[RMDB]
Source: RMDB library TTRINS, as collected in RNAgym. Structure probing data (DMS) for a 177-nucleotide construct. The reactions ran in a buffer of 150 mM KOAc, 10 mM MgCl2 and 150 mM bicine (pH 8.5), at 24 C.

RNA sequence: GGGAACGACUCGAGUAGAGUCGAAAAGAUAUGGAACGCAUCAGAGAUGUGUCAAAAUAAUGAGAUGGUCGGAAACGACCAUCUCAUUAUUUUGACAUACAUCGACGAAGAUGUCGUUCCUAAGUCAUCAAAAUAGGUUCUUCGGAACCUAUUUUGAAAAAGAAACAACAACAACAAC
Reactivity to DMS in 0.01 (KOAc 150mM, MgCl2 10mM, bicine 150mM(pH8.5), 24C), signal-to-noise 3, nucleotides 027 to 126: g000a070u000a300u010g000g010a030a000c020g000c010a000u000c000a090g000a200g020a010u000g030u000g020u000c000a010a010a000a010u000a000a000u000g010a020g010a040u000g010g020u000c000g010g020a100a130a280c010g010a010c000c010a010u000c000u000c000a000u000u000a010u000u010u000u000g000a010c010a060u010a060c020a020u000c000g010a230c260g010a100a090g000a010u000g010u030c010g020u000u010c000c000u000a030a070g010u010c060a200